[RMDB]
RNA sequence: GGGAACGACUCGAGUAGAGUCGAAAAAGCUAUUCAUUCUUGUUUUAUAGAACGUGUGGAUUGGGAUAUAGAGUAUCCUUAUAUCUCACAUGAAAAGAAAUUGAAUUCCUGUUGUAGAAUCGUUGAGCAGUUAAUCUUGGUUCGCCAAGAUUAACUGAAAAGAAACAACAACAACAAC
Reactivity to DMS in 0.01 (KOAc 150mM, MgCl2 10mM, bicine 150mM(pH8.5), 24C), signal-to-noise 1, nucleotides 027 to 126: a060g010c100u020a090u000u000c020a080u000u000c020u000u000g000u010u000u020u000a110u010a120g000a050a110c020g010u000g020u000g000g000a060u000u000g010g000g010a030u000a020u000a170g010a180g010u000a010u000c020c000u000u020a030u000a060u000c000u020c020a000c000a030u000g000a090a030a060a060g000a030a050a080u010u000g000a040a070u000u000c020c020u000g010u000u000g000u000a090g020a070a100u010c160g000u000u000g010a180g000